[RMDB]
RNA sequence: GGGAACGACUCGAGUAGAGUCGAAAACAACUCGAUGUUGAAAUAAGAAGACUUAACACUCUAAUGUCAGUAGAUGUAAAGAAACCAGUUGCACUGAUCUGCAUGGAGUUGGAGAGAAAGUUCACAAGGCUAUUUGAGCAGCUACCCGAAGACUGCAGGUAAAAUCAUCGUUCGCGAUGAUUUUACCAAAAGAAACAACAACAACAAC
Reactivity to 2A3 in 0.01 (KOAc 150mM, MgCl2 10mM, bicine 150mM(pH8.5), 24C), signal-to-noise 1, nucleotides 027 to 156: c000a030a000c010u040c100g110a140u080g010u080u070g130a110a110a210u300a040a020g050a020a010g040a030c030u110u100a190a000c050a000c060u120c000u140a260a170u140g050u150c020a010g000u030a030g050a160u050g010u090a050a050a080g040a010a110a030c050c080a110g000u080u040g000c070a060c020u050g000a090u060c030u000g000c000a000u020g000g000a010g000u050u040g020g000a050g000a000g020a060a020a060g030u130u100c070a000c020a070a010g050g000c010u090a050u140u140u170g000a000g000c050a000g010c010u080a070c010c000c030g000a030a000g040a050c060u000g000c090a040